[RMDB]
RNA sequence: GGGAACGACUCGAGUAGAGUCGAAAAGGCCCAAUGCUGUCGCGAAGAGUUCGGCUCUGUCAGCCCGGCUGGGUCCGGGUGGGGGCCGGCACAGAGGGACACACCGGGCCGGGGCGCCGAGGAUAGCGACUAGAAUUCUGUUCGCAGAAUUCUAGUCAAAAGAAACAACAACAACAAC
Reactivity to DMS in 0.01 (KOAc 150mM, MgCl2 10mM, bicine 150mM(pH8.5), 24C), signal-to-noise 1, nucleotides 027 to 126: g030g010c000c000c010a090a060u010g000c200u000g040u000c020g020c000g000a300a240g000a090g010u000u010c000g010g000c040u000c010u010g020u010c170a160g010c000c010c000g000g010c040u020g020g020g020u010c000c010g020g020g020u000g010g010g040g000g000c000c000g030g000c030a030c010a020g000a300g010g010g000a050c010a020c000a060c120c090g010g000g020c000c010g020g000g030g030c080g010c110c010g010a070g010g000a120u010a070g010c180